[RMDB]
RNA sequence: GGGAACGACUCGAGUAGAGUCGAAAAGAUAUGGAGGAUACUACCCACCCUAGUGUGACCGUUGAUCUUAUUAUAUCGGAAACGAUAUAAUAAGGGAGGUCACGCUAGGAGGUAUCCUCCUAAGUCACUUAAACACUCUGUUCGCAGAGUGUUUAAGAAAAGAAACAACAACAACAAC
Reactivity to DMS in 0.01 (KOAc 150mM, MgCl2 10mM, bicine 150mM(pH8.5), 24C), signal-to-noise 5, nucleotides 027 to 126: g010a080u000a110u000g010g010a020g000g000a010u000a000c000u010a150c090c050c120a300c120c000c000u000a010g020u010g010u000g010a010c000c000g000u000u020g010a010u010c000u000u010a000u000u000a000u000a000u010c000g010g000a080a030a120c000g000a020u000a000u000a000a000u000a000a010g000g000g010a010g030g000u000c000a000c000g000c000u000a010g010g010a000g010g000u000a010u000c000c000u000c000c010u000a000a080g000u000c070a190
Reactivity to 2A3 in 0.01 (KOAc 150mM, MgCl2 10mM, bicine 150mM(pH8.5), 24C), signal-to-noise 2, nucleotides 027 to 126: g130a060u210a140u300g020g010a000g030g000a010u010a020c010u170a220c000c060c020a040c000c000c000u020a020g020u000g000u000g000a010c010c000g090u170u060g010a000u000c020u010u010a000u000u010a010u000a000u000c000g010g000a010a040a060c010g010a000u000a000u010a030a000u000a000a020g000g000g010a010g000g000u000c000a000c000g010c000u010a000g000g000a000g010g000u000a000u000c000c000u010c000c000u000a000a000g010u010c020a040